[RMDB]
RNA sequence: GGGAACGACUCGAGUAGAGUCGAAAAACGCGAGGGUAAGCAGGUGGAUCCCGACGAGCUUCUUGUCGGCGACUAUGUGUAUCGCGAUGUACGUAGGGCUUUGAAGGCUAGUCCCGAGGAGCUCAAGGAGUAUUACUGGUUUCGACCAGUAAUACUCAAAAGAAACAACAACAACAAC
Reactivity to 2A3 in 0.01 (KOAc 150mM, MgCl2 10mM, bicine 150mM(pH8.5), 24C), signal-to-noise 9, nucleotides 027 to 126: a010c040g010c030g020a080g040g140g130u160a130a050g020c020a020g050g050u060g080g080a270u010c000c010c010g000a010c020g010a010g060c160u180u110c030u100u140g040u050c010g010g050c130g020a000c010u010a030u090g150u020g010u090a050u070c000g000c020g070a080u100g040u090a030c050g050u080a140g000g030g000c000u040u020u090g070a050a010g020g000c040u070a060g080u150c000c010c000g000a030g000g010a000g000c000u000c010a000a050g140
Reactivity to DMS in 0.01 (KOAc 150mM, MgCl2 10mM, bicine 150mM(pH8.5), 24C), signal-to-noise 5, nucleotides 027 to 126: a080c020g000c030g000a010g020g000g030u030a070a160g000c030a020g010g040u010g000g000a160u000c060c010c020g000a050c050g010a000g010c200u010u040c050u000u010g010u010c030g000g000c090g030a060c010u000a000u020g000u020g020u000a080u000c020g000c030g000a120u000g000u010a040c090g010u010a100g010g010g000c000u020u000u000g010a300a130g010g000c050u040a140g000u040c000c020c000g000a250g000g010a010g000c000u000c010a110a080g020

Source: RMDB library OK1LIB, as collected in RNAgym. The record gives the reactivity of an RNA of 177 nucleotides to 2A3 and DMS. DMS adducts were read by reverse transcription with MarathonRT. Reactivities are given for positions 27 through 126. The 2A3 profile rests on 12,073 reads. For DMS, 12,491 sequencing reads were counted.